RNA sequence: GGGAACGACUCGAGUAGAGUCGAAAAGAAGAGAAUAAGCGCGGAUAUAUCUGUCGGUAGAGCAGCAGGACCGACACCUGCGAGUAGAGGGAUCAAGACCCUGUUCGCGCAAAGAUUGAAGUAGAAGGAUGAUCCUCAUCUUCGGAUGAGGAUCAUCAAAAGAAACAACAACAACAAC
Reactivity to DMS in 0.01 (KOAc 150mM, MgCl2 10mM, bicine 150mM(pH8.5), 24C), signal-to-noise 2, nucleotides 027 to 126: g000a160a080g000a170g000a120a010u060a030a110g040c010g000c040g030g000a030u000a000u060a140u020c020u040g010u010c110g000g000u000a020g000a160g010c120a020g160c000a090g020g000a210c020c010g000a120c070a040c000c000u000g080c080g000a280g000u000a170g010a010g000g020g020a160u000c300a100a150g040a180c060c040c000u000g000u000u000c000g040c000g030c000a120a050a080g000a050u030u010g000a080a120g050u000a060g000a300a020g000
Reactivity to 2A3 in 0.01 (KOAc 150mM, MgCl2 10mM, bicine 150mM(pH8.5), 24C), signal-to-noise 1, nucleotides 027 to 126: g030a030a010g070a030g030a040a060u150a220a100g000c050g000c000g000g040a000u010a000u040a060u080c010u000g070u000c030g020g160u180a060g010a070g170c060a010g000c000a010g020g070a020c000c000g060a000c000a000c000c000u000g000c010g000a010g030u120a080g030a050g000g010g090a000u120c050a040a000g080a130c000c000c000u010g010u010u030c010g000c000g000c050a000a000a000g020a080u090u110g000a100a030g040u160a010g030a090a030g010
Background
The record gives the reactivity of an RNA of 177 nucleotides to DMS and 2A3. 2A3 adducts were read by reverse transcription with SuperScript II with manganese. The RNA was probed in 150 mM KOAc, 10 mM MgCl2 and 150 mM bicine (pH 8.5) at 24 C.